[RMDB]
The record gives the reactivity of an RNA of 177 nucleotides to DMS.
RNA sequence: GGGAACGACUCGAGUAGAGUCGAAAAGUUGACCGUGAUGGAAAACCUGUUCCUGGUUCGGUUAACCAGACGUGUCCAUUGCCAGCCAAUGGUUCUGGACAUGAAUUCACACUUGACCAUUUGGCUCCGCGAUCGAAUGGUUCGCCAUUCGAUCGCGAAAAGAAACAACAACAACAAC
Reactivity to DMS in 0.01 (KOAc 150mM, MgCl2 10mM, bicine 150mM(pH8.5), 24C), signal-to-noise 1, nucleotides 027 to 126: g000u000u010g000a080c040c020g040u000g020a040u010g000g000a020a060a030a120c270c160u080g010u000u000c020c000u010g030g020u000u000c050g000g000u000u010a050a040c040c050a070g010a170c060g000u000g010u000c000c000a030u000u010g010c040c010a070g000c290c150a070a040u000g000g010u000u000c020u000g000g010a020c010a010u000g000a130a140u010u020c060a080c160a050c080u000u000g000a080c070c080a130u000u000u000g000g010c070u000c120